[RMDB]
RNA sequence: GGGAACGACUCGAGUAGAGUCGAAAAAGAAAGGUAUAUCAAAGAUCGAAAGAUCAACAAUGCUCGAUAGAUAUACAUCCCAAAUGUAGUAACAAAUCGAGCAACUUCAACGGAAACGACAAAAAAACUAAACGUAUUGAUUCGUCAAUACGUUUAGAAAAGAAACAACAACAACAAC
Reactivity to 2A3 in 0.01 (KOAc 150mM, MgCl2 10mM, bicine 150mM(pH8.5), 24C), signal-to-noise 7, nucleotides 027 to 126: a000g110a020a070a000g120g000u030a020u000a000u030c010a080a060a010g010a000u010c000g030a050a040a040g010a010u030c010a000a030c040a070a090u050g000c000u000c010g010a010u030a080g010a000u010a010u000a020c010a030u040c020c000c010a010a030a020u160g010u060a110g040u020a090a070c060a100a150a040u010c000g010a000g110c000a020a050c040u170u130c050a090a070c040g070g040a100a060a030c040g120a040c110a010a140a010a020a020a010a000
Reactivity to DMS in 0.01 (KOAc 150mM, MgCl2 10mM, bicine 150mM(pH8.5), 24C), signal-to-noise 6, nucleotides 027 to 126: a100g010a070a100a080g000g010u000a010u000a010u010c010a110a090a130g010a000u000c000g020a150a080a180g010a000u000c000a100a080c270a050a080u000g010c000u000c010g010a020u000a050g010a010u000a010u000a010c000a080u000c000c000c000a060a110a090u010g010u010a080g020u000a060a070c150a050a070a030u000c010g000a020g020c000a080a090c120u010u010c130a040a100c080g000g010a040a060a060c060g000a050c110a000a000a040a040a080a080a140

Structure probing data (2A3 and DMS) for a 177-nucleotide construct.